[RMDB]
RNA sequence: GGGAACGACUCGAGUAGAGUCGAAAAGCGUGAUUAGGGAUAAUUAUUAAUCUGUAAUCCCGCGAAAAGAACAGGGCCCAAUUAUUAAGCGGGGCCCAUGGACGAAUUUUAAGUCCUCACACGCGAAGCACCAGGAUUAUUUCGAUAAUCCUGGUGCAAAAGAAACAACAACAACAAC
Reactivity to 2A3 in 0.01 (KOAc 150mM, MgCl2 10mM, bicine 150mM(pH8.5), 24C), signal-to-noise 1, nucleotides 027 to 126: g000c010g000u010g010a020u020u000a030g090g000g000a000u000a180a000u180u300a070u160u140a220a040u030c000u000g260u090a000a010u010c060c020c040g000c020g020a040a080a000a060g040a070a060c090a160g000g010g020c010c040c020a050a080u190u130a110u120u160a140a020g030c010g000g000g020g000c030c000c000a000u000g000g000a000c040g020a070a000u050u130u050u130a110a000g000u010c000c010u060c010a050c010a000c030g000c000g020a090a000
Reactivity to DMS in 0.01 (KOAc 150mM, MgCl2 10mM, bicine 150mM(pH8.5), 24C), signal-to-noise 1, nucleotides 027 to 126: g020c000g020u000g010a070u000u000a010g000g020g020a060u000a030a120u010u010a170u050u040a060a080u000c010u000g000u000a080a010u000c000c010c000g000c040g000a090a100a100a140g030a150a140c200a110g010g020g000c000c000c020a150a050u030u000a110u000u010a030a130g020c060g010g030g020g000c010c020c000a000u000g000g000a030c010g010a140a100u000u000u000u000a070a180g030u010c000c000u000c300a040c190a120c020g000c060g000a070a130
An RNA of 177 nucleotides, treated with 2A3 and DMS and read out base by base. For DMS, 937 sequencing reads were counted. For 2A3, 840 sequencing reads were counted. The data come from the RNA Mapping Database (RMDB), library OK2TRN. The reactions ran in a buffer of 150 mM KOAc, 10 mM MgCl2 and 150 mM bicine (pH 8.5), at 24 C. 2A3 adducts were read by reverse transcription with SuperScript II with manganese.